[RMDB]
RNA sequence: GGGAACGACUCGAGUAGAGUCGAAAAGGCUUCCUGGACACGCUGGUGGUGCUGCACCGGGCCGGGGCGCGGCUGGACGUGCGCGAUGCCUGGGGUCGUCUGCCCGUGGACUUGGCCGAGGAGCGGGCCGUAUAGCUGAGUUCGCUCAGCUAUACGGAAAAGAAACAACAACAACAAC
Reactivity to DMS in 0.01 (KOAc 150mM, MgCl2 10mM, bicine 150mM(pH8.5), 24C), signal-to-noise 5, nucleotides 027 to 126: g010g010c070u000u010c030c020u000g010g010a090c060a050c080g020c060u000g010g010u000g020g010u010g020c050u000g010c040a040c040c020g000g010g000c030c080g000g010g010g010c030g020c020g000g000c080u010g000g000a100c050g020u000g010c040g010c050g000a130u010g020c020c020u000g010g000g010g010u010c140g010u000c030u010g010c200c010c010g020u000g000g000a110c060u000u000g020g020c030c020g000a070g010g000a130g030c020g000g000g010
Reactivity to 2A3 in 0.01 (KOAc 150mM, MgCl2 10mM, bicine 150mM(pH8.5), 24C), signal-to-noise 3, nucleotides 027 to 126: g050g000c030u060u050c020c010u030g050g030a030c040a000c070g060c050u060g030g040u030g010g040u150g030c030u050g020c010a030c010c000g010g000g000c000c030g030g000g030g020c020g000c010g040g000c050u140g060g070a080c020g050u100g060c090g010c050g080a100u170g030c000c030u070g020g010g000g010u030c010g000u010c020u030g030c010c020c000g030u030g010g030a140c030u040u080g040g000c030c020g010a110g010g020a050g030c010g010g020g010